[RMDB]
About this RNA
Conditions: 150 mM KOAc, 10 mM MgCl2 and 150 mM bicine (pH 8.5), 24 C. The record gives the reactivity of an RNA of 177 nucleotides to 2A3 and DMS. For 2A3, 1,961 sequencing reads were counted. The DMS profile rests on 1,505 reads. 2A3 adducts were read by reverse transcription with SuperScript II with manganese.
RNA sequence: GGGAACGACUCGAGUAGAGUCGAAAAUCGGAGUCGCCGAUCGCUCCAGCAGGCCCGACGGCUUUUGUCGGUUCGUGGGCGUCUCGCCGGCCAUAAACGAGCGCGACGCGACCGACACGGACGACACGCAUGGUUUUACUUUCGAGUAAAACCAUGCAAAAGAAACAACAACAACAAC
Reactivity to 2A3 in 0.01 (KOAc 150mM, MgCl2 10mM, bicine 150mM(pH8.5), 24C), signal-to-noise 2, nucleotides 027 to 126: u130c030g030g020a030g050u000c050g000c070c000g030a120u050c040g020c030u010c000c000a070g050c070a000g030g100c020c010c030g040a040c040g010g020c000u100u140u070u100g030u010c080g060g000u090u020c000g020u030g020g060g030c020g030u010c010u020c020g050c020c030g050g060c060c020a190u300a140a110a020c070g040a070g000c020g010c030g060a090c000g000c000g050a080c030c010g040a020c010a000c000g050g010a020c000g000a010c000a000c150
Reactivity to DMS in 0.01 (KOAc 150mM, MgCl2 10mM, bicine 150mM(pH8.5), 24C), signal-to-noise 2, nucleotides 027 to 126: u000c040g000g010a100g020u000c100g040c020c020g010a070u000c070g010c010u000c060c030a130g010c140a170g000g000c020c040c010g010a050c050g000g000c030u000u000u000u020g010u000c010g020g000u010u000c020g050u000g000g040g000c040g020u010c040u010c010g000c020c020g000g010c090c140a100u010a030a090a100c080g000a040g000c000g030c050g010a140c060g010c020g000a090c080c070g000a050c020a030c100g010g000a020c030g010a030c070a120c300